[RMDB]
RNA sequence: GGGAACGACUCGAGUAGAGUCGAAAAGCUGAGAAAUUCGUUUCUCAGCACUGGAAAUAAAGCCGAAAGGCUAGCCAUACCUUAUUUGGCGAAAGCCUGGCAUGAGCCUCCACUUCGGUGGAGGCAACACAGAACGGAUAUUCGUAUCCGUUCUGUGAAAAGAAACAACAACAACAAC
Reactivity to 2A3 in 0.01 (KOAc 150mM, MgCl2 10mM, bicine 150mM(pH8.5), 24C), signal-to-noise 4, nucleotides 027 to 126: g000c000u010g000a000g020a000a070a030u100u110c170g050u040u000u000c000u000c000a000g030c000a010c010u040g050g150a030a110a120u180a100a150a030g000c010c010g100a180a090a020g000g000c000u010a000g000c000c000a030u070a080c000c040u210u190a190u120u100u030g010g000c020g010a170a080a010g000c000c000u000g000g000c020a020u100g050a010g010c000c000u010c000c000a010c010u040u050c180g080g000u000g000g000a000g000g000c000a000a000
Reactivity to DMS in 0.01 (KOAc 150mM, MgCl2 10mM, bicine 150mM(pH8.5), 24C), signal-to-noise 3, nucleotides 027 to 126: g010c000u000g000a030g000a010a010a030u000u020c180g020u000u010u000c000u000c000a010g010c000a020c090u000g010g010a100a110a110u000a070a080a090g010c000c000g000a100a100a080g000g000c000u000a100g000c020c000a010u000a130c210c100u010u010a070u000u000u010g000g000c000g020a080a130a100g000c010c000u000g020g010c040a120u000g000a120g000c020c000u000c000c000a000c010u000u010c140g020g000u010g010g010a000g000g000c010a010a020
The data come from the RNA Mapping Database (RMDB), library M2PK50. This 177-nucleotide RNA was probed chemically with 2A3 and DMS. For 2A3, 5,637 sequencing reads were counted. Reactivities are given for positions 27 through 126.